[RMDB]
RNA sequence: GGGAACGACUCGAGUAGAGUCGAAAAUUCGGUCGUGGCCAGAAUGGAGGCAACGAUGAAACACUUCCCUUUAAAAGUUGCGUCACUAACCUUGAAGAAAGGGACAACUAUUGGUAGGCAGUUUGGGGAAUAAAUCAUACUUCGGUAUGAUUUAUUCAAAAGAAACAACAACAACAAC
Reactivity to DMS in 0.01 (KOAc 150mM, MgCl2 10mM, bicine 150mM(pH8.5), 24C), signal-to-noise 9, nucleotides 027 to 126: u010u000c030g020g030u010c010g020u000g000g020c000c010a150g020a140a150u030g020g010a140g010g010c000a030a020c010g000a030u000g000a040a050a080c180a120c250u000u000c000c000c000u020u010u020a060a090a090a060g010u000u000g010c080g000u000c070a090c120u010a060a120c010c010u000u000g000a140a090g010a090a020a020g000g000g000a080c100a030a070c090u010a110u010u000g010g010u000a060g000g000c040a040g010u000u000u000g000g000g010
Reactivity to 2A3 in 0.01 (KOAc 150mM, MgCl2 10mM, bicine 150mM(pH8.5), 24C), signal-to-noise 9, nucleotides 027 to 126: u020u020c040g080g010u000c000g010u030g020g000c010c000a020g150a180a120u300g150g070a090g040g010c000a010a000c010g000a010u050g040a030a030a000c100a040c060u010u040c000c000c000u020u110u070a090a070a010a010g020u020u030g030c040g050u050c000a000c040u030a090a080c010c010u020u030g030a060a050g100a130a080a010g020g010g010a010c030a030a010c050u090a100u110u060g080g020u070a090g020g050c060a030g030u050u090u090g080g010g030

Structure probing data (DMS and 2A3) for a 177-nucleotide construct. Source: RMDB libraries RFM100 and RFMREP, as collected in RNAgym.